[RMDB]
RNA sequence: GGGAACGACUCGAGUAGAGUCGAAAACGCAGACGGGCGGCAUCGAGGCGCCCAUCUCCGAGGUGCUCACAAUGCUCCGAGACGUGUCGGCACGGGUCGACGGAGAACCGGCACAAACGAUAAAGGAAAAAUUUAGGUACUUCGGUACCUAAAUUUUAAAAGAAACAACAACAACAAC
Reactivity to 2A3 in 0.01 (KOAc 150mM, MgCl2 10mM, bicine 150mM(pH8.5), 24C), signal-to-noise 2, nucleotides 027 to 126: c040g050c020a020g010a070c030g000g020g030c060g030g010c020a060u110c170g090a150g100g060c000g060c000c040c000a010u000c020u000c020c020g050a080g000g070u030g000c020u040c060a070c040a030a120u130g000c000u000c030c030g000a030g000a050c160g070u000g020u090c040g060g060c090a040c060g050g040g090u120c050g070a210c020g060g010a030g000a050a030c030c020g000g000c000a000c000a070a100a000c060g050a120u160a150a130a040g080g000a100
Reactivity to DMS in 0.01 (KOAc 150mM, MgCl2 10mM, bicine 150mM(pH8.5), 24C), signal-to-noise 4, nucleotides 027 to 126: c060g020c190a040g010a020c050g000g000g020c050g020g020c030a100u010c170g010a220g000g020c050g010c010c000c010a020u010c010u000c080c050g000a150g020g000u010g000c020u010c170a110c210a110a090u000g010c030u010c030c020g010a250g000a090c060g010u010g020u000c080g010g010c060a130c070g020g000g020u000c010g000a130c050g000g010a070g010a060a080c300c060g010g020c020a040c070a060a030a120c100g010a090u010a040a060a130g000g030a050